[RMDB]
Chemical mapping of a 207-nucleotide RNA with 2A3. Source: RMDB library M2RFPK, as collected in RNAgym. The reactions ran in a buffer of 150 mM KOAc, 10 mM MgCl2 and 150 mM bicine (pH 8.5), at 24 C. The 2A3 profile rests on 408 reads.
RNA sequence: GGGAACGACUCGAGUAGAGUCGAAAAUUACCGCCCAGGAUGGGGUGCAGCGUUCCUGCAAUAUCCAGGGCACCUAGGUGCAGCCUUGUAGUUUGAGUGGACUUUAGGCUAAAGAAUUUCACUAGCAAAAAUCUUUAAGGGUUCGCCCUUAAAGAAAGAUCGUAAUGACCUUCGGGUCAUUACGAUCAAAAGAAACAACAACAACAAC
Reactivity to 2A3 in 0.01 (KOAc 150mM, MgCl2 10mM, bicine 150mM(pH8.5), 24C), signal-to-noise 1, nucleotides 027 to 156: u060u010a060c000c050g000c000c000c000a000g020g000a010u020g060g060g000g160u030g000c000a010g080c060g120u140u060c010c000u000g040c000a020a070u060a000u090c000c000a000g010g000g040c000a040c000c050u070a070g130g000u030g040c000a000g000c000c000u080u140g100u190a040g000u000u040u000g130a080g030u060g010g000a000c020u080u160u020a010g000g050c000u070a120a060a030g020a100a140u100u290u290c020a010c020u070a060g060c080a020a040a100a100a160u070c000u010u000u010a000a000g060g000g050u000u100c190g020c000c000c010u030u000a000a000a000g000a000a020a000